[RMDB]
RNA sequence: GGGAACGACUCGAGUAGAGUCGAAAAGUCAAACGAAAACAUCAAACUAAAGUUCGCUGAAAUGAUUAUGAUCAAACGAAAUUAUCGAGCUGAAGGUCACCGAAAUGAUUAUAAUUAAACGAAAUUAAUAGUGCCUUUUUUUCGAAAAAGGCACUAUAAAAGAAACAACAACAACAAC
Reactivity to DMS in 0.01 (KOAc 150mM, MgCl2 10mM, bicine 150mM(pH8.5), 24C), signal-to-noise 2, nucleotides 027 to 126: g040u010c070a080a110a120c080g010a060a030a020a170c050a040u060c100a080a020a060c140u040a060a100a120g030u000u000c010g080c070u040g000a110a080a060u010g000a050u000u000a030u010g030a030u000c010a020a060a180c110g000a050a060a060u020u010a070u000c010g000a100g000c070u000g020a100a050g010g000u010c030a010c230c000g000a030a070a050u020g000a020u000u000a040u010a020a000u000u020a020a040a050c060g000a050a020a090u030u030a040
Reactivity to 2A3 in 0.01 (KOAc 150mM, MgCl2 10mM, bicine 150mM(pH8.5), 24C), signal-to-noise 3, nucleotides 027 to 126: g090u090c110a010a030a130c100g170a080a030a090a170c140a180u120c030a020a180a070c040u090a170a030a060g050u060u050c030g040c210u200g060a050a060a140u120g010a040u010u010a000u100g060a040u050c010a050a000a050c020g140a000a030a040u180u120a050u150c020g000a040g100c060u020g030a130a000g010g000u010c000a000c070c000g050a140a000a000u100g000a000u000u030a000u000a040a040u050u050a160a120a010c010g000a110a000a000u110u130a030
An RNA of 177 nucleotides, treated with DMS and 2A3 and read out base by base.
Source: RMDB library OK1LIB, as collected in RNAgym.
For 2A3, 1,026 sequencing reads were counted.